[RMDB]
RNA sequence: GGGAACGACUCGAGUAGAGUCGAAAAGAUAUGGAAAUCUCCCCACCGAACUACUCCGAAACGUCGGAAACGACGUUAAGGAGCGAGGAUUUCCUAAGUCAAAGCCAACCUCUUCGGAGGUUGGCAACUUAAAUCCCGUGUUCGCACGGGAUUUAAGAAAAGAAACAACAACAACAAC
Reactivity to DMS in 0.01 (KOAc 150mM, MgCl2 10mM, bicine 150mM(pH8.5), 24C), signal-to-noise 1, nucleotides 027 to 126: g030a050u000a120u000g000g030a000a000a040u000c040u000c090c010c000c100a300c210c050g010a060a100c220u010a200c010u000c010c010g000a300a030a000c000g010u000c000g000g000a100a030a140c000g010a000c010g000u000u000a020a270g010g000a000g000c090g020a010g000g010a030u000u000u000c000c010u000a150a100g030u000c030a110a170a160g020c000c000a040a000c000c000u000c000u000u000c120g000g000a020g010g010u020u000g020g000c000a040a000
Source information
Source: RMDB library TTRDEL, as collected in RNAgym. Chemical mapping of a 177-nucleotide RNA with DMS. For DMS, 734 sequencing reads were counted.